RNA sequence: GGGAACGACUCGAGUAGAGUCGAAAAGUGAGACCCUUCGGGGUCUCACAAAGAACGCUGCUGCGAGCAGCACGGAGAGAACCGAACACGCACGCAAUAAAAAAAGAUCACAGUUCGCUGUGAUCAACGUAGUAUAACAGUUCGCUGUUAUACUACGAAAAGAAACAACAACAACAAC
Reactivity to DMS in 0.01 (KOAc 150mM, MgCl2 10mM, bicine 150mM(pH8.5), 24C), signal-to-noise 5, nucleotides 027 to 126: g010u000g010a030g010a010c000c000c000u010u010c190g050g010g020g000u000c000u000c000a000c000a010a080a130g000a140a110c140g010c050u010g020c010u010g010c080g030a130g020c020a020g000c030a050c050g000g010a070g010a110g010a110a120c050c010g000a110a060c070a050c070g000c030a030c080g000c070a090a070u030a010a000a040a120a060a090a060g000a010u000c000a000c000a010g020u000u000c170g030c010u000g010u000g000a010u000c000a020a050
Reactivity to 2A3 in 0.01 (KOAc 150mM, MgCl2 10mM, bicine 150mM(pH8.5), 24C), signal-to-noise 8, nucleotides 027 to 126: g010u000g000a000g010a000c000c010c040u010u060c240g030g000g000g000u000c000u000c000a000c000a000a000a000g010a050a020c050g000c040u030g000c020u080g040c080g110a090g040c020a010g020c030a010c020g030g010a090g000a020g010a090a030c020c000g010a050a020c050a010c060g050c010a020c040g050c050a090a100u250a220a140a020a000a000a000a020g000a000u010c000a000c000a010g020u070u070c130g040c110u000g000u000g000a000u000c000a000a010